[RMDB]
RNA sequence: GGGAACGACUCGAGUAGAGUCGAAAAAACUACAAUCAUGGAUUCAUCUAUUUCUCUUUGCAGUUCUGAUGUUUUUGCCUCUCAUUUUAAUGUAUGUGGUUAGGCACAUACAUAUUAAGGAUUGUAUAUCUUCUUAGAGAACAGACCUCUUUAUUGCCCCAGGGGUAAGAUUCGUCUUACCCCUGGGAAAAGAAACAACAACAACAAC
Reactivity to 2A3 in 0.01 (KOAc 150mM, MgCl2 10mM, bicine 150mM(pH8.5), 24C), signal-to-noise 1, nucleotides 027 to 156: a000a000c150u210a050c050a060a160u060c020a100u110g030g050a060u060u130c000a010u040c040u060a070u000u100u020c040u000c000u100u140u130g000c030a010g020u040u040c010u000g090a060u020g040u000u000u030u070u180g030c000c020u000c000u020c070a060u000u070u070u300a100a060u040g030u070a000u010g040u010g040g090u080u050a050g060g010c000a000c020a000u010a000c000a000u060a030u070u120a030a000g060g030a000u000u080g020u030a060u010a030u120c030u030u030c000u050u050a030g050a020g020a160a050c100a050g040a030c110c000u010c030u110u190u250a220u090u280g040c000